[RMDB]
RNA sequence: GGGAACGACUCGAGUAGAGUCGAAAACUUAGCAUUGAGCCAGUGGCCAUAAUCUGUGAUAAACUAGAAGAUCAGUUCAGAAGACUGUUCAAAGAACUGCCCGAAGAGUGUAGUCGUGAGUGCCAAAACCGAGAUACUUCUUCGGAAGUAUCUCGGUAAAAGAAACAACAACAACAAC
Reactivity to 2A3 in 0.01 (KOAc 150mM, MgCl2 10mM, bicine 150mM(pH8.5), 24C), signal-to-noise 2, nucleotides 027 to 126: c000u040u050a020g030c000a090u050u070g040a000g030c000c010a030g040u070g080g040c010c010a040u090a070a100u030c030u090g050u020g080a140u070a130a200a050c010u010a020g060a210a000g020a060u060c000a030g000u210u010c030a090g080a120a000g060a210c040u020g010u010u010c040a140a000a000g000a030a000c020u010g040c010c000c000g120a090a060g060a010g060u120g010u020a010g010u000c010g040u000g100a060g020u070g000c000c020a000a130a000
Reactivity to DMS in 0.01 (KOAc 150mM, MgCl2 10mM, bicine 150mM(pH8.5), 24C), signal-to-noise 1, nucleotides 027 to 126: c090u000u010a060g000c130a050u030u010g030a180g000c030c120a090g000u010g000g080c050c000a070u000a070a110u020c090u000g010u010g030a240u010a030a070a080c180u000a000g000a150a080g050a050u070c000a010g030u000u050c020a140g000a230a090g050a010c070u000g010u000u000c000a100a130a060g000a050a050c030u000g040c010c020c090g000a020a090g010a110g000u000g030u030a130g010u030c000g020u000g000a000g020u000g000c090c040a020a010a150